[RMDB]
RNA sequence: GGGAACGACUCGAGUAGAGUCGAAAAGAAAAUAGCGUACAGCACACUCAGACUGUACGCUAAGUAAGUGUGUGUUCUAUAAGGUCCAAUUGAACACACACUCCGUUGGACCAAGAGUGUGAAAAAACGUAUUAAAACGGUUCGCCGUUUUAAUACGAAAAGAAACAACAACAACAAC
Reactivity to DMS in 0.01 (KOAc 150mM, MgCl2 10mM, bicine 150mM(pH8.5), 24C), signal-to-noise 4, nucleotides 027 to 126: g020a110a080a100a160u000a000g000c000g010u000a010c010a010g020c040a060c020a020c010u000c030a170g000a110c010u000g000u000a000c010g010c010u000a000a030g000u010a060a020g010u000g020u000g010u010g000u000u010c000u020a070u010a080a100g010g020u000c020c020a120a080u000u010g010a000a010c000a010c000a010c010a000c010u000c010c060g040u000u020g010g000a060c020c070a100a090g000a020g010u000g020u000g010a010a050a050a080a070a110
Reactivity to 2A3 in 0.01 (KOAc 150mM, MgCl2 10mM, bicine 150mM(pH8.5), 24C), signal-to-noise 5, nucleotides 027 to 126: g080a010a160a010a040u050a000g000c000g000u000a010c000a010g010c040a010c000a010c090u040c020a020g050a300c020u000g000u010a000c010g000c000u000a000a000g030u070a030a010g000u010g000u010g000u000g010u020u000c170u180a230u060a290a090g040g000u000c010c010a040a050u100u160g000a010a010c000a000c000a000c000a000c010u000c010c030g140u070u130g000g000a000c010c000a030a030g020a010g010u050g010u090g130a060a040a050a000a010a010
Notes
The data come from the RNA Mapping Database (RMDB), library M2PK90. Structure probing data (DMS and 2A3) for a 177-nucleotide construct. For 2A3 the reverse transcriptase was SuperScript II with manganese. The reactions ran in a buffer of 150 mM KOAc, 10 mM MgCl2 and 150 mM bicine (pH 8.5), at 24 C. The 2A3 profile rests on 6,889 reads.